[RMDB]
RNA sequence: GGGAACGACUCGAGUAGAGUCGAAAACAGGCGGUCACCAGUGCUGUGUGUGGUGGGAUGCUGCUGUACCUUGCUUUCUGCCUCAUGUUGAGUGACUUCCCAUCGGAUAUGCAGAAACAUGCUGGGAGACUGCGCGCUGAUUCGUCAGCGCGCAGUCAAAAGAAACAACAACAACAAC
Reactivity to 2A3 in 0.01 (KOAc 150mM, MgCl2 10mM, bicine 150mM(pH8.5), 24C), signal-to-noise 1, nucleotides 027 to 126: c020a080g100g070c020g000g010u090c040a010c090c020a000g080u060g060c060u000g000u000g000u000g060u130g040g010u040g000g070g020a070u090g020c040u000g050c000u040g020u110a130c000c030u030u060g000c000u000u070u300c070u030g030c000c000u060c000a070u060g030u180u100g000a030g060u020g060a110c000u070u020c000c000c000a000u040c030g040g110a010u070a000u040g030c000a040g070a020a060a080c050a080u270g000c000u000g080g000g010a200